Structure probing data (DMS and 2A3) for a 177-nucleotide construct. Conditions: 150 mM KOAc, 10 mM MgCl2 and 150 mM bicine (pH 8.5), 24 C. DMS adducts were read by reverse transcription with MarathonRT.
RNA sequence: GGGAACGACUCGAGUAGAGUCGAAAAGGACUUAGGUUCGCCUAAGUCCAAAUAACGUCUACAAGUACGGUAGACCAAGAUAACGUACAGUACAGAAGUACAAAAGGAGAGACUUCGGUCUCUCCAAUCAAAAAACGAAGUUCGCUUCGUUUUUUGAAAAAGAAACAACAACAACAAC
Reactivity to DMS in 0.01 (KOAc 150mM, MgCl2 10mM, bicine 150mM(pH8.5), 24C), signal-to-noise 4, nucleotides 027 to 126: g000g000a000c010u000u000a000g010g010u000u010c230g020c000c000u000a010a000g000u000c000c000a000a020a040u000a120a110c270g010u000c010u010a010c010a090a100g030u000a010c020g010g000u010a010g010a060c010c140a110a090g000a070u010a070a100c030g000u000a020c040a110g000u000a010c040a110g020a090a110g010u000a010c020a090a080a090a080g010g000a010g010a000g000a000c000u000u020c170g020g010u000c000u000c000u000c000c000a020a020
Reactivity to 2A3 in 0.01 (KOAc 150mM, MgCl2 10mM, bicine 150mM(pH8.5), 24C), signal-to-noise 4, nucleotides 027 to 126: g020g000a000c010u000u010a000g030g020u030u040c170g070c040c000u000a000a000g000u010c000c000a000a000a000u010a020a010c030g000u000c000u020a010c010a210a040g050u020a030c040g050g000u000a010g010a000c010c010a040a010g030a150u150a130a040c020g010u020a010c030a060g020u020a010c020a060g250a300a030g170u030a020c040a050a130a040a050g000g000a000g000a000g000a000c000u050u060c240g040g000u000c000u000c000u000c000c000a000a010